[RMDB]
RNA sequence: GGGAACGACUCGAGUAGAGUCGAAAAAUUCGCUUGAGUUCGAAGUUAAGCCGGGUAUUUCCCCUCGUUUAACGGUAUCGCUUCCGCCGGUUGACUUCAGAUAGAGCAAGCCGAAGUGAUAAGGACACUGUGUUGAAUCAUUCGUGAUUCAACACAGAAAAGAAACAACAACAACAAC
Reactivity to DMS in 0.01 (KOAc 150mM, MgCl2 10mM, bicine 150mM(pH8.5), 24C), signal-to-noise 4, nucleotides 027 to 126: a060u000u000c050g000c030u010u000g000a070g020u010u010c050g020a020a040g000u000u020a060a050g030c000c020g000g010g020u000a160u010u020u000c020c000c000c040u020c100g010u000u040u000a120a110c070g010g040u000a060u020c070g000c050u010u000c020c060g020c000c020g000g000u010u010g010a010c020u010u010c030a060g000a100u020a100g040a120g020c020a020a040g020c070c070g020a070a020g010u000g000a070u030a080a160g020g000a170c210a140
Reactivity to 2A3 in 0.01 (KOAc 150mM, MgCl2 10mM, bicine 150mM(pH8.5), 24C), signal-to-noise 4, nucleotides 027 to 126: a010u030u030c040g000c010u000u010g000a040g080u180u080c020g010a040a000g000u000u050a090a020g100c000c000g010g040g000u110a130u040u070u010c000c000c000c000u050c040g100u080u100u190a100a040c000g030g020u040a060u120c040g010c060u050u020c050c010g020c020c000g020g000u000u020g000a020c000u020u000c060a050g020a090u130a020g160a000g040c010a000a020g020c060c040g020a020a010g010u050g070a130u060a140a050g060g000a040c030a010